[RMDB]
RNA sequence: GGGAACGACUCGAGUAGAGUCGAAAAGCGUCUUGAUCUUCUCGGCUUAUGUGGUACGCUUGAGCGACAUUAUCAGCGGUGAUCCCCAUGUGGUAAUCAUUGAAUGCGUCCCAUAAUCCGUCAUGUACGUGUUAAUCGGCUUCGGCCGAUUAACACGAAAAGAAACAACAACAACAAC
Reactivity to 2A3 in 0.01 (KOAc 150mM, MgCl2 10mM, bicine 150mM(pH8.5), 24C), signal-to-noise 2, nucleotides 027 to 126: g000c010g030u050c000u050u030g050a040u000c050u070u020c120u120c000g030g040c000u030u030a010u020g190u240g030g040u200a010c040g000c000u040u080g100a050g050c050g150a050c030a160u080u100a110u280c030a020g040c030g030g000u020g020a110u120c040c000c030c060a280u240g030u110g030g030u020a120a000u000c000a010u020u040g070a100a000u160g000c010g000u020c020c000c000a000u020a000a010u040c010c000g020u030c050a060u170g050u090a010
Reactivity to DMS in 0.01 (KOAc 150mM, MgCl2 10mM, bicine 150mM(pH8.5), 24C), signal-to-noise 1, nucleotides 027 to 126: g010c070g030u000c020u000u000g010a070u000c100u000u000c050u000c060g040g000c080u000u000a020u000g040u010g000g010u030a020c010g020c000u010u000g000a070g020c150g050a110c250a090u000u010a050u000c070a110g040c030g020g020u000g020a020u000c180c070c000c080a170u010g030u010g030g000u000a040a020u000c040a110u010u000g000a070a070u010g010c000g030u000c000c000c000a040u000a040a030u000c000c020g000u010c110a080u000g040u020a100
Chemical mapping of a 177-nucleotide RNA with 2A3 and DMS. The reactions ran in a buffer of 150 mM KOAc, 10 mM MgCl2 and 150 mM bicine (pH 8.5), at 24 C.